RNA sequence: GGGAACGACUCGAGUAGAGUCGAAAAGCUUAAUAACCUGCGCUGAGCCCUUCUCCCCCAGCUUGCCUGUGUCCUAGGGAAUUGGAAGGGCAUCCUUCACAGGAUCGUGUGGAAGUCCUGCUCGGGGUCCAAACAUGGUAAUUCGUUACCAUGUUAACUGUAAGUGGACUUUCGAGUCCACUUACAGAAAAGAAACAACAACAACAAC
Reactivity to 2A3 in 0.01 (KOAc 150mM, MgCl2 10mM, bicine 150mM(pH8.5), 24C), signal-to-noise 1, nucleotides 027 to 156: g040c030u180u170a040a070u110a240a210c020c020u010g000c060g010c050u040g020a020g000c000c000c000u010u000c180u040c060c050c000c000c000a000g020c070u100u200g030c010c020u090g030u030g010u130c010c010u000a060g050g010g040a040a050u180u090g000g000a030a000g020g000g000c000a000u030c070c000u050u090c030a050c010a070g120g000a120u090c070g090u070g010u010g120g060a100a030g050u030c000c040u010g000c040u030c000g000g010g000g030u000c030c010a000a030a000c000a000u000g000g000u000a010a010u090u010c150g040u050u010a000c000c000a000u000g000u000u000a010a100

Source: RMDB library M2RFPK, as collected in RNAgym.
Chemical mapping of a 207-nucleotide RNA with 2A3.
For 2A3, 578 sequencing reads were counted.